[RMDB]
RNA sequence: GGGAACGACUCGAGUAGAGUCGAAAAUCGCCGCCCUGCCAGGGAGUGCCAAAGACCCUUCCUGGGCCUCUAUCCUCCAAGGCCUGGAGGAGCCUUACCACGCCUUCGUAGAACGCCUCAACAUAGCAUGCAGGGUGAUGUUCGCAUCACCCUGCAUAAAAGAAACAACAACAACAAC
Reactivity to 2A3 in 0.01 (KOAc 150mM, MgCl2 10mM, bicine 150mM(pH8.5), 24C), signal-to-noise 1, nucleotides 027 to 126: u100c000g000c000c000g010c000c000c030u060g060c060c000a020g020g040g000a000g050u050g000c000c010a100a000a090g030a030c000c000c000u010u000c000c050u020g110g000g000c000c000u080c050u040a150u080c000c000u000c020c000a020a120g020g000c000c010u000g030g000a000g000g020a000g010c000c010u070u090a030c000c030a010c000g010c020c000u040u060c000g030u000a040g050a260a000c060g050c010c010u130c020a030a030c020a090u190a040g020c000
The record gives the reactivity of an RNA of 177 nucleotides to 2A3. Conditions: 150 mM KOAc, 10 mM MgCl2 and 150 mM bicine (pH 8.5), 24 C. Values are in units of 0.01, from 0 to 300, in steps of 10. For 2A3 the reverse transcriptase was SuperScript II with manganese.